Overview
The record gives the reactivity of an RNA of 177 nucleotides to 2A3 and DMS. Source: RMDB library OK2TST, as collected in RNAgym. 2A3 adducts were read by reverse transcription with SuperScript II with manganese. For DMS the reverse transcriptase was MarathonRT.
RNA sequence: GGGAACGACUCGAGUAGAGUCGAAAAGUGAAGAGGAUGAACCGAAAACGAUAAUAAUGGAGCGCUUUAAAAUAAGUGCAAUACAGGUAGAAGUAAUAUUAAAUACUCGUCUUCGUUCGCUCCAAAAUGAUGGGCCUGGAUUCGUCCAGGCCUAUUAAAAAGAAACAACAACAACAAC
Reactivity to 2A3 in 0.01 (KOAc 150mM, MgCl2 10mM, bicine 150mM(pH8.5), 24C), signal-to-noise 3, nucleotides 027 to 126: g030u020g020a010a000g030a000g070g000a030u030g020a040a010c030c040g000a040a080a030a050c030g030a060u040a210a060u130a080a060u220g080g020a120g000c020g010c000u140u040u080a160a280a000a020u230a090a020g000u010g000c000a000a040u130a040c060a030g000g080u100a050g030a230a010g060u030a020a120u100a040u300u190a080a120a020u050a020c010u000c020g010u000c030u030u010c000g210u020u000c020g000c000u050c000c000a030a030a030a040
Reactivity to DMS in 0.01 (KOAc 150mM, MgCl2 10mM, bicine 150mM(pH8.5), 24C), signal-to-noise 5, nucleotides 027 to 126: g030u010g020a050a090g030a060g010g020a030u010g010a070a050c050c030g010a040a050a100a080c120g010a070u010a130a110u000a060a100u000g000g010a290g010c010g030c020u000u010u000a080a100a150a100u010a020a030g020u000g010c010a080a100u010a110c080a060g000g000u000a080g000a090a120g010u000a040a070u010a130u000u000a060a090a120u010a040c050u000c000g020u000c020u000u000c000g000u010u000c010g010c050u010c020c030a050a040a070a080